This 207-nucleotide RNA was probed chemically with 2A3.
[RMDB]
RNA sequence: GGGAACGACUCGAGUAGAGUCGAAAAGAAAGAAAGAAAGCGUUUGGGUGGGUCCAUCGACCGUCGUGGCGUAUUCGGACGCUUUACCACGACGCGAGGAAAUAGCGAGACCGACCACCCCCUUUAACAGAGGUAUAGUAGUUCGCUACUAUACCAACAACGAACCCAAGUUCGCUUGGGUUCGUUGAAAAGAAACAACAACAACAAC
Reactivity to 2A3 in 0.01 (KOAc 150mM, MgCl2 10mM, bicine 150mM(pH8.5), 24C), signal-to-noise 1, nucleotides 027 to 156: g040a030a000a010g020a000a110a000g050a090a040a010g100c100g030u270u180u120g060g000g000u090g000g000g080u070c030c030a140u210c040g040a070c040c010g000u020c010g000u030g000g030c110g040u140a050u090u190c070g000g030a010c020g030c060u120u040u020a020c000c000a000c000g000a000c000g000c000g000a010g000g030a040a000a190u110a010g030c070g000a010g050a030c000c000g000a000c020c000a000c000c000c000c000c000u140u070u000a270a110c150a130g030a020g090g000u000a000u000a000g020u000a000g000u000u030c150g010c090u000a000c000u000a000u020a000c030c000a000a000
For 2A3 the reverse transcriptase was SuperScript II with manganese.
Values cover nucleotides 27 to 156.
The reactions ran in a buffer of 150 mM KOAc, 10 mM MgCl2 and 150 mM bicine (pH 8.5), at 24 C.